An RNA of 207 nucleotides, treated with DMS and 2A3 and read out base by base. The DMS profile rests on 2,016 reads. Source: RMDB library OK3TST, as collected in RNAgym. Reactivities are rounded to 0.1 and cut off at 0 and 3. As a SHAPE reagent, 2A3 marks flexible, mostly unpaired nucleotides at the ribose 2'-OH. 2A3 adducts were read by reverse transcription with SuperScript II with manganese. DMS adducts were read by reverse transcription with MarathonRT.
RNA sequence: GGGAACGACUCGAGUAGAGUCGAAAAGCAAAUAGGCAACUUGGUACUAUCUUAUUCUGAGUAGAGAGUGGAGAAAGUAUUUUCAGACUGAAGAAAACUUUGAAAAGUCAGGAGCUAAGCUGCUCGGAGCUCAGUGCCGCAGCAUGGCUGUGGUGGACGUAUGCUCCUGAUUCGUCAGGAGCAUACGAAAAGAAACAACAACAACAAC
Reactivity to DMS in 0.01 (KOAc 150mM, MgCl2 10mM, bicine 150mM(pH8.5), 24C), signal-to-noise 1, nucleotides 027 to 156: g000c050a070a090a110u010a060g040g030c020a060a020c020u000u000g010g000u000a040c020u000a170u000c020u000u000a070u010u000c020u000g000a120g020u010a090g000a300g000a050g050u040g010g000a080g000a080a130a150g000u000a070u000u000u000u020c020a110g020a120c030u010g030a120a090g020a070a090a070a100c090u000u000u000g000a080a000a090a130g000u010c050a080g030g000a090g060c010u000a050a180g020c010u010g000c020u010c040g060g010a170g060c000u010c090a110g030u010g000c000c020g000c010a040g030c020a070u000g060g000c020u010g050u000g020g060u000g000g010a110
Reactivity to 2A3 in 0.01 (KOAc 150mM, MgCl2 10mM, bicine 150mM(pH8.5), 24C), signal-to-noise 3, nucleotides 027 to 156: g030c000a000a020a130u130a070g000g000c040a070a050c120u040u040g020g000u030a030c020u030a070u110c020u110u090a080u170u030c010u020g030a030g010u070a040g030a000g000a010g020u060g030g040a040g040a040a120a000g040u040a110u010u080u020u020c020a050g040a130c020u040g080a110a070g030a040a170a080a070c060u180u170u130g110a080a100a020a010g050u080c040a010g020g020a050g010c020u030a070a000g030c010u070g000c000u030c000g070g010a000g000c000u000c010a050g030u040g080c000c010g000c000a010g000c070a160u200g150g000c010u010g010u010g010g010u040g020g040a020